[RMDB]
The record gives the reactivity of an RNA of 177 nucleotides to 2A3 and DMS. For 2A3, 1,494 sequencing reads were counted. Values cover nucleotides 27 to 126.
RNA sequence: GGGAACGACUCGAGUAGAGUCGAAAAGAUAUGGACAUUACUGCAGACAUGAACGGUCGGAAACGACGUUCAACAGCUGUUAAUGUCCUAAGUCAAACCUACAUACCUCUUCGGAGGUAUGUAGGAAUCUACAGGGGCAGUUCGCUGCCCCUGUAGAAAAAGAAACAACAACAACAAC
Reactivity to 2A3 in 0.01 (KOAc 150mM, MgCl2 10mM, bicine 150mM(pH8.5), 24C), signal-to-noise 1, nucleotides 027 to 126: g010a000u040a000u070g000g010a000c000a000u010u000a010c120u190g080c030a100g160a300c100a130u090g000a010a000c020g300g300u110c010g010g000a020a010a020c010g000a020c000g000u020u030c040a030a000c130a060g130c000u040g040u190u040a010a000u000g010u000c000c000u010a010a000g000u020c020a050a030a170c000c010u000a020c000a010u000a000c000c000u020c010u080u100c300g250g000a010g020g000u010a000u000g000u000a000g000g000a000a020
Reactivity to DMS in 0.01 (KOAc 150mM, MgCl2 10mM, bicine 150mM(pH8.5), 24C), signal-to-noise 2, nucleotides 027 to 126: g000a000u000a240u000g000g000a000c010a000u000u000a020c300u010g030c010a080g000a230c190a120u010g000a010a000c000g010g020u000c000g010g010a070a000a060c000g040a070c020g010u000u000c000a060a110c300a060g000c020u000g000u010u010a000a020u000g000u000c000c000u010a010a060g000u000c010a080a200a150c000c000u000a000c000a000u000a000c010c000u000c000u000u010c160g020g000a010g000g030u000a000u000g000u000a000g010g000a030a030

It was measured as part of the RMDB library TTRDEL.